The data come from the RNA Mapping Database (RMDB), library OK2TST. The record gives the reactivity of an RNA of 177 nucleotides to 2A3 and DMS. The RNA was probed in 150 mM KOAc, 10 mM MgCl2 and 150 mM bicine (pH 8.5) at 24 C. The DMS profile rests on 4,987 reads. Reactivities are given for positions 27 through 126.
RNA sequence: GGGAACGACUCGAGUAGAGUCGAAAAUACUACCGACAGAGCUUCUUCAUUGCAUCAUGCCUCGUCCAUGCCAGUCAUGCCGAGCCAACGAAACGCACCUCCUUCCAAUGAAACUCGUGCUGAAAAGACUUCAACUCAUUUUCGAAUGAGUUGAAGUAAAAGAAACAACAACAACAAC
Reactivity to 2A3 in 0.01 (KOAc 150mM, MgCl2 10mM, bicine 150mM(pH8.5), 24C), signal-to-noise 3, nucleotides 027 to 126: u070a000c030u020a050c020c010g030a010c020a050g060a020g040c020u000u000c000u040u040c090a130u090u120g040c010a030u040c000a010u180g000c000c000u010c020g040u010c060c010a040u070g050c000c020a050g040u160c010a050u050g020c000c000g020a010g010c000c010a070a020c050g080a070a050a040c070g000c020a050c000c010u080c000c010u070u020c030c000a090a090u120g070a100a020a030c040u040c020g040u060g030c030u010g000a080a060a010a020g020
Reactivity to DMS in 0.01 (KOAc 150mM, MgCl2 10mM, bicine 150mM(pH8.5), 24C), signal-to-noise 5, nucleotides 027 to 126: u010a110c110u000a080c040c020g010a110c100a070g010a110g010c030u000u000c050u000u010c060a080u010u000g010c040a080u000c070a080u000g010c100c020u000c030g020u000c050c040a070u010g020c020c080a070g000u010c060a060u000g010c130c020g000a070g010c040c040a050a080c110g000a050a060a100c130g000c040a060c060c020u000c030c020u000u000c040c040a030a080u000g000a070a060a070c050u000c040g020u000g010c050u000g010a070a090a080a120g000